The record gives the reactivity of an RNA of 177 nucleotides to DMS and 2A3. The RNA was probed in 150 mM KOAc, 10 mM MgCl2 and 150 mM bicine (pH 8.5) at 24 C. For 2A3 the reverse transcriptase was SuperScript II with manganese. The data come from the RNA Mapping Database (RMDB), library OK2TRN.
RNA sequence: GGGAACGACUCGAGUAGAGUCGAAAAGUGACGAGGGCCAGACUGUCCGUGAGAACGGACACGGACGUCCUUAUCGGCGUGCGCCGUAUACUUAGGGUAUAAAUGAGUAUCCCUACGUACGCCGUGACUUGUGCUAUGUAUUCGUACAUGGUACAAGAAAAGAAACAACAACAACAAC
Reactivity to DMS in 0.01 (KOAc 150mM, MgCl2 10mM, bicine 150mM(pH8.5), 24C), signal-to-noise 9, nucleotides 027 to 126: g020u010g020a110c150g010a030g010g010g010c010c030a300g010a150c180u000g010u000c000c000g020u000g000a260g010a210a020c020g000g000a050c000a010c030g000g000a140c240g000u000c000c020u000u000a070u000c010g010g010c000g010u000g000c010g000c090c300g000u010a030u000a010c020u000u000a040g010g010g020u010a140u010a040a080a080u010g010a040g000u000a030u000c030c030c020u000a100c010g010u000a010c000g000c000c000g010u000g000a130
Reactivity to 2A3 in 0.01 (KOAc 150mM, MgCl2 10mM, bicine 150mM(pH8.5), 24C), signal-to-noise 9, nucleotides 027 to 126: g170u100g070a060c120g020a050g010g010g000c010c010a010g020a070c030u020g000u000c000c000g000u010g020a080g020a040a010c010g000g000a000c000a000c010g000g000a010c010g010u010c000c000u050u060a150u120c010g000g000c010g000u010g000c010g000c010c050g070u080a040u020a080c030u030u030a040g140g050g070u210a120u080a200a200a120u180g030a030g050u040a070u100c010c000c010u010a020c000g000u000a000c000g000c000c000g000u010g010a010